[RMDB]
RNA sequence: GGGAACGACUCGAGUAGAGUCGAAAAAGAAAUAGCGAUUCUCGAAGGAGUUGAGUCCUUCGAGGAUUGCUAAGCAAAGAUGCAGAACUAUCAAUGAACGACUUUGCUCAUCUUUCUAUACAAAAAAGAAAGAUUUAUGGUUCGCCAUAAAUCUUUCAAAAGAAACAACAACAACAAC
Reactivity to DMS in 0.01 (KOAc 150mM, MgCl2 10mM, bicine 150mM(pH8.5), 24C), signal-to-noise 2, nucleotides 027 to 126: a070g010a050a090a140u000a010g000c010g000a030u000u000c000u000c000g020a020a020g000g030a030g010u030u030g000a270g000u000c000c000u000u000c020g030a010g000g000a000u000u000g000c000u000a000a050g000c050a000a040a060g010a090u000g000c090a130g020a050a150c120u000a170u030c110a070a170u010g010a100a160c050g000a050c020u050u000u000g000c000u000c190a130u020c010u000u000u000c010u010a080u010a090c070a010a050a070a030a060a070
Reactivity to 2A3 in 0.01 (KOAc 150mM, MgCl2 10mM, bicine 150mM(pH8.5), 24C), signal-to-noise 2, nucleotides 027 to 126: a000g040a000a040a010u020a030g000c000g000a000u000u000c010u000c010g000a000a000g010g030a020g020u220u240g180a050g180u010c010c000u000u000c010g000a000g000g010a000u000u000g000c020u000a010a000g030c010a000a020a020g060a040u130g020c100a030g110a160a080c070u080a090u230c070a120a130u120g030a070a020c030g020a010c030u000u000u030g010c000u020c020a070u020c000u030u030u010c030u050a160u040a240c080a030a200a030a020a000a030